Conditions: 150 mM KOAc, 10 mM MgCl2 and 150 mM bicine (pH 8.5), 24 C. The record gives the reactivity of an RNA of 177 nucleotides to 2A3 and DMS. It was measured as part of the RMDB libraries RFM100 and RFMREP. 2A3 adducts were read by reverse transcription with SuperScript II with manganese. Reactivities are rounded to 0.1 and cut off at 0 and 3.

[RMDB]
RNA sequence: GGGAACGACUCGAGUAGAGUCGAAAACCGGACGGCGGGUCACCGGUCAGGCGGUUCCGUCCCACGGCGGUGACCAGCCCGAAAUCGCGCCCCGCGGUCAUAGCGGCGGUGCUCCGGUAGCAGUUCGUAUUGCGAAAUAAUUCGUUAUUUCGCAAUAAAAAGAAACAACAACAACAAC
Reactivity to 2A3 in 0.01 (KOAc 150mM, MgCl2 10mM, bicine 150mM(pH8.5), 24C), signal-to-noise 9, nucleotides 027 to 126: c000c010g000g010a020c020g000g010c020g020g010g000u020c000a000c000c010g050g220u120c030a020g020g040c040g060g040u240u270c130c060g100u230c050c000c010a100c090g030g000c000g000g000u000g000a000c000c000a000g000c000c000c000g020a030a010a020u180c090g000c000g000c000c000c000c000g000c020g010g060u210c080a110u120a160g000c000g030g030c090g010g000u000g000c010u000c000c000g030g000u020a040g050c060a060g010u060u070c030g010
Reactivity to DMS in 0.01 (KOAc 150mM, MgCl2 10mM, bicine 150mM(pH8.5), 24C), signal-to-noise 9, nucleotides 027 to 126: c010c000g000g010a130c210g000g010c010g000g000g000u000c010a010c010c000g010g010u020c040a170g010g010c070g010g000u010u040c180c060g000u020c010c020c060a140c190g010g010c010g000g000u010g000a010c000c000a040g010c020c020c080g000a050a080a070u020c190g000c010g020c000c000c000c010g010c010g000g010u020c260a100u030a280g010c000g010g010c160g020g010u000g000c000u000c010c010g000g010u000a100g010c140a130g010u010u010c050g010